[RMDB]
RNA sequence: GGGAACGACUCGAGUAGAGUCGAAAAGCGGACCUUCCGGUCAGGCUGGAGCCAUCCGCUGGGGCAUCGCCAUGAGUUUGCGCAGCUUUGUCGAUCAAGAGAUGAUUGAGUCAAUGCGUCUGGCCGACCGCACUAAUUAGUUCGCUAAUUAGUGCGGAAAAGAAACAACAACAACAAC
Reactivity to DMS in 0.01 (KOAc 150mM, MgCl2 10mM, bicine 150mM(pH8.5), 24C), signal-to-noise 4, nucleotides 027 to 126: g010c020g000g000a070c150c060u000u010c080c070g010g020u000c090a080g000g010c020u000g010g010a060g020c050c100a220u000c030c030g030c020u000g000g010g000g020c110a060u010c100g000c020c020a060u000g000a080g010u010u010u000g020c070g010c040a090g020c060u000u000u000g010u000c010g010a040u000c020a060a130g010a180g010a090u000g010a050u000u000g010a060g020u010c070a090a070u010g000c050g020u000c040u010g000g000c010c050g010a210
Reactivity to 2A3 in 0.01 (KOAc 150mM, MgCl2 10mM, bicine 150mM(pH8.5), 24C), signal-to-noise 3, nucleotides 027 to 126: g010c000g010g000a030c010c030u100u030c050c010g030g010u050c050a030g080g080c020u050g000g040a000g020c020c010a040u030c010c000g040c020u040g010g040g010g000c010a060u090c040g000c020c000a080u130g020a050g150u000u130u200g020c060g000c020a000g000c000u010u040u110g070u060c010g070a040u030c030a120a050g070a050g020a300u130g020a050u040u070g020a040g060u090c030a050a080u040g030c010g020u010c020u040g030g030c000c000g010a050

The record gives the reactivity of an RNA of 177 nucleotides to DMS and 2A3. The RNA was probed in 150 mM KOAc, 10 mM MgCl2 and 150 mM bicine (pH 8.5) at 24 C. The data come from the RNA Mapping Database (RMDB), library OK2TST. DMS adducts were read by reverse transcription with MarathonRT. The 2A3 profile rests on 3,357 reads.